[RMDB]
RNA sequence: GGGAACGACUCGAGUAGAGUCGAAAAAGGAAAGACCGUACACCUUCACCAUCGUUUAUUGGACAGACUAUUAUCUGCUUGUCACGGGUAUAGGAUUAUCGCACAUGUGUGGCAAACUAUGUUUAUAUUGGUGGUUCGUCGAGAUGGUGAAAGACAGGCUUCACAUCAAUUUCGAUUGAUGUGAAGCAAAAGAAACAACAACAACAAC
Reactivity to DMS in 0.01 (KOAc 150mM, MgCl2 10mM, bicine 150mM(pH8.5), 24C), signal-to-noise 2, nucleotides 027 to 156: a100g010g000a080a080a090g020a150c050c030g000u010a120c030a120c000c000u000u000c000a060c000c000a030u000c020g040u000u010u000a090u010u030g010g000a050c010a040g010a060c010u010a050u010u000a080u000c060u000g010c010u000u000g010u000c080a070c020g000g000g020u000a080u000a090g010g010a250u000u000a120u010c070g010c090a090c060a090u000g000u010g010u000g020g020c040a000a050a020c030u000a040u010g010u000u000u000a140u000a140u060u010g030g050u000g000g010u000u000c040g010u000c040g020a100g030a060u020g000g040u000g020a020a040a040g000a110c040a160g000
Reactivity to 2A3 in 0.01 (KOAc 150mM, MgCl2 10mM, bicine 150mM(pH8.5), 24C), signal-to-noise 5, nucleotides 027 to 156: a000g150g000a110a050a030g120a040c010c020g040u070a020c050a070c020c000u000u030c000a000c020c000a010u020c020g110u080u170u150a150u130u170g050g000a010c010a020g040a020c010u020a020u170u040a030u070c030u060g040c020u000u040g010u020c000a000c040g030g000g030u050a040u050a100g060g030a030u120u090a050u190c080g120c090a050c030a130u120g110u040g010u010g110g000c000a010a000a020c070u070a040u180g060u050u180u020a100u040a030u060u110g040g000u010g020g000u030u060c040g000u020c050g020a010g010a080u000g010g010u000g010a020a000a000g020a010c020a010g090